This 177-nucleotide RNA was probed chemically with DMS. The data come from the RNA Mapping Database (RMDB), library M2PK50. Values cover nucleotides 27 to 126. The RNA was probed in 150 mM KOAc, 10 mM MgCl2 and 150 mM bicine (pH 8.5) at 24 C.
RNA sequence: GGGAACGACUCGAGUAGAGUCGAAAAUCUUAGCGUUUCGACGCUAAGAAAACGUGGUGGAGGAGGAGGAAAGCUCGGCAUUAAAGGGAUAAAAACAUCUUCAUAUAGGGUCGUUCGCGACCCUAAAUCCUGCGUAGCAAUUCGUUGCUACGCAGGAAAAAGAAACAACAACAACAAC
Reactivity to DMS in 0.01 (KOAc 150mM, MgCl2 10mM, bicine 150mM(pH8.5), 24C), signal-to-noise 1, nucleotides 027 to 126: u000c000u000u000a000g000c000g030u000u000u010c200g040a080c000g000c000u000a000a010g000a020a040a090a120c110g010u010g000g010u000g000g010a150g000g000a060g010g030a050g020g000a020a120a080g010c080u000c030g020g000c030a090u000u000a010a090a100g030g010g000a060u040a020a020a120a110a150c120a060u010c010u010u000c040a160u010a160u000a070g000g000g050u000c000g010u000u000c180g000c070g030a000c030c030c000u010a000a030a100